[RMDB]
RNA sequence: GGGAACGACUCGAGUAGAGUCGAAAAGAGGAGGUGGUGGUCAACGUACGCUGCCGCUGUCGUCGUCGUCGAGGCAGCAGCUGGAGCCCUGUUGCGGUCGCACCAGCAGAAGAACUGCAUCGGGUACGGAGGGUGCAUGGUUCGCCAUGCACCCUCCAAAAGAAACAACAACAACAAC
Reactivity to 2A3 in 0.01 (KOAc 150mM, MgCl2 10mM, bicine 150mM(pH8.5), 24C), signal-to-noise 1, nucleotides 027 to 126: g100a000g000g000a010g000g010u070g000g070u070g010g000u090c010a030a010c190g120u050a030c110g000c000u020g030c000c000g010c000u040g140u210c040g000u030c000g050u010c040g230u070c050g040a010g010g000c000a000g040c030a000g000c010u190g030g030a000g000c000c000c000u130g190u300u050g000c120g020g000u100c010g020c050a210c050c000a000g010c140a000g010a180a000g030a120a050c000u000g000c000a050u050c030g060g000g000u030a120c040

Chemical mapping of a 177-nucleotide RNA with 2A3. For 2A3, 512 sequencing reads were counted. The reactions ran in a buffer of 150 mM KOAc, 10 mM MgCl2 and 150 mM bicine (pH 8.5), at 24 C.